[RMDB]
RNA sequence: GGGAACGACUCGAGUAGAGUCGAAAACCGGCCAGGCCGGGCUACGACCAUGAACCUGCAACCGCGCCAGCGUCGUAGUCAGGGCGUCCAGGUCGGGUCGCUCGCGAUGCAGGGUCAGAAGCACCACCGUGCGGGAUAUGUUCGCAUAUCCCGCACGAAAAGAAACAACAACAACAAC
Reactivity to DMS in 0.01 (KOAc 150mM, MgCl2 10mM, bicine 150mM(pH8.5), 24C), signal-to-noise 1, nucleotides 027 to 126: c020c000g050g010c010c000a160g000g060c020c000g090g000g000c000u000a090c000g000a000c050c050a280u050g000a090a170c020c020u000g040c140a030a160c070c070g000c000g060c120c050a090g000c170g090u000c020g000u000a010g000u000c050a070g030g000g000c000g060u030c020c080a240g000g000u000c000g050g000g000u000c000g010c000u020c040g000c120g000a130u000g010c090a000g070g000g050u000c000a060g000a250a140g000c050a150c100c000a090c170
Reactivity to 2A3 in 0.01 (KOAc 150mM, MgCl2 10mM, bicine 150mM(pH8.5), 24C), signal-to-noise 3, nucleotides 027 to 126: c010c000g020g000c020c000a090g040g030c010c000g030g010g000c010u000a000c000g010a010c000c040a170u150g100a090a040c040c040u060g000c060a070a120c160c060g090c060g020c030c020a060g010c030g100u030c000g000u010a010g020u000c030a020g030g040g120c000g020u070c130c130a060g020g020u050c000g000g000g000u030c030g010c020u020c000g010c030g010a070u180g010c040a070g050g000g000u020c010a000g060a140a000g070c020a020c010c020a020c010
Chemical mapping of a 177-nucleotide RNA with DMS and 2A3.
For 2A3, 1,597 sequencing reads were counted.
2A3 adducts were read by reverse transcription with SuperScript II with manganese.
Conditions: 150 mM KOAc, 10 mM MgCl2 and 150 mM bicine (pH 8.5), 24 C.